Description
Conditions: 150 mM KOAc, 10 mM MgCl2 and 150 mM bicine (pH 8.5), 24 C. An RNA of 177 nucleotides, treated with 2A3 and DMS and read out base by base. 2A3 adducts were read by reverse transcription with SuperScript II with manganese.
[RMDB]
RNA sequence: GGGAACGACUCGAGUAGAGUCGAAAAGACGCAGCUGCUGCGCACUUCGCGCGGGGGCCCACGGCAGGCAGCACAACCCUCCCUCCAUCUCCCACUCCACCGGCGGCCGAAGCCCCACGCGCACUGGUACAUUGUGCAAGUUCGCUUGCACAAUGUAAAAAGAAACAACAACAACAAC
Reactivity to 2A3 in 0.01 (KOAc 150mM, MgCl2 10mM, bicine 150mM(pH8.5), 24C), signal-to-noise 5, nucleotides 027 to 126: g060a010c020g010c020a030g010c040u200g020c020u010g010c030g020c030a050c070u180u190c110g000c000g000c020g000g000g000g010g000c010c040c020a120c010g010g010c020a050g050g030c010a020g040c010a020c030a070a120c010c000c010u020c010c000c000u050c010c000a050u040c040u030c010c010c000a050c020u030c000c010a050c000c020g040g000c010g030g000c000c000g020a010a000g000c000c000c000c010a120c010g000c000g000c000a020c020u050g040g030
Reactivity to DMS in 0.01 (KOAc 150mM, MgCl2 10mM, bicine 150mM(pH8.5), 24C), signal-to-noise 5, nucleotides 027 to 126: g020a170c040g020c040a060g010c070u010g010c040u010g000c080g000c050a080c170u030u020c130g010c040g040c010g020g040g020g000g030c010c020c100a140c090g000g000c040a120g000g010c030a040g000c050a060c090a080a060c030c040c000u010c040c000c020u030c020c060a070u010c050u010c010c010c020a150c060u020c040c040a030c080c060g000g000c080g010g000c010c020g030a300a230g000c010c010c000c000a070c010g040c010g010c020a050c070u030g020g010